[RMDB]
Source: RMDB library RFMREP, as collected in RNAgym. Structure probing data (2A3 and DMS) for a 177-nucleotide construct. For DMS the reverse transcriptase was MarathonRT. Reactivities are rounded to 0.1 and cut off at 0 and 3. The DMS profile rests on 9,396 reads.
RNA sequence: GGGAACGACUCGAGUAGAGUCGAAAACUUCAGCUUGCCUCGCCUGAAUCACUGCACUCGUGUGGUGAGCGGGGGCUGCAUGGCUACAAACGGAAAUGCUGGGAAGGAUUUUUUCCCUGCCUGUCUGCUCUAAGAUAAUCUUCGGAUUAUCUUAGAGAAAAGAAACAACAACAACAAC
Reactivity to 2A3 in 0.01 (KOAc 150mM, MgCl2 10mM, bicine 150mM(pH8.5), 24C), signal-to-noise 3, nucleotides 027 to 126: c000u120u090c060a000g020c010u060u100g030c000c010u030c030g150c030c030u100g070a130a120u030c000a000c010u010g000c010a020c020u120c150g100u020g010u020g020g020u000g000a000g010c030g010g010g010g040g000c000u020g000c020a100u080g050g000c010u070a060c110a080a190a010c060g020g040a060a060a030u070g000c020u040g020g000g040a020a020g100g080a160u200u130u010u010u070u050c000c000c000u000g030c000c020u080g040u040c010u030g010
Reactivity to DMS in 0.01 (KOAc 150mM, MgCl2 10mM, bicine 150mM(pH8.5), 24C), signal-to-noise 6, nucleotides 027 to 126: c050u000u010c090a050g020c010u000u000g010c000c040u000c040g010c020c070u000g000a130a170u000c010a010c010u000g000c010a020c050u010c300g020u000g040u000g000g010u000g000a020g010c030g000g000g000g000g030c030u000g010c050a030u010g030g000c020u000a110c180a070a100a190c080g000g000a040a060a060u000g000c020u000g000g000g010a040a030g020g000a050u000u000u010u010u000u000c000c000c000u000g000c020c090u000g000u000c020u000g000